An RNA of 177 nucleotides, treated with DMS and 2A3 and read out base by base. For 2A3, 3,118 sequencing reads were counted. The reactions ran in a buffer of 150 mM KOAc, 10 mM MgCl2 and 150 mM bicine (pH 8.5), at 24 C. It was measured as part of the RMDB library VIROID. DMS adducts were read by reverse transcription with MarathonRT. For DMS, 2,752 sequencing reads were counted.
[RMDB]
RNA sequence: GGGAACGACUCGAGUAGAGUCGAAAAGAGGGAGCCAAUGCCAAAGAGGUGGGGAUCGUCGGAAGGUAUCGUCCCAAUGACCAAGAGAAGGGAAGAAACGGAAGCCUUUCCCCUUGACGCCGGUGAAGUCUUAAAAAUACUUCGGUAUUUUUAAGACAAAAGAAACAACAACAACAAC
Reactivity to DMS in 0.01 (KOAc 150mM, MgCl2 10mM, bicine 150mM(pH8.5), 24C), signal-to-noise 4, nucleotides 027 to 126: g010a070g020g000g010a100g020c060c030a090a090u000g000c050c060a080a140a060g010a070g020g030u020g010g000g010g010a040u010c050g000u010c060g020g010a140a060g010g020u010a050u000c080g010u000c010c030c020a090a140u000g000a070c100c080a070a070g010a100g010a050a070g000g000g010a090a030g010a040a100a080c150g000g010a080a140g020c030c020u000u000u000c010c000c010c080u000u010g000a070c120g010c060c020g000g010u010g000a060a160
Reactivity to 2A3 in 0.01 (KOAc 150mM, MgCl2 10mM, bicine 150mM(pH8.5), 24C), signal-to-noise 3, nucleotides 027 to 126: g080a020g000g010g020a010g000c000c030a060a050u090g020c020c020a090a090a040g100a020g060g020u110g010g020g010g020a030u030c020g030u000c030g040g070a040a020g040g000u070a050u160c030g040u020c020c010c010a010a090u160g040a050c030c040a050a020g040a000g040a100a070g010g010g020a030a020g030a060a130a020c070g040g040a040a030g030c000c010u000u020u060c000c000c000c020u010u040g040a040c040g000c050c020g060g000u070g030a080a020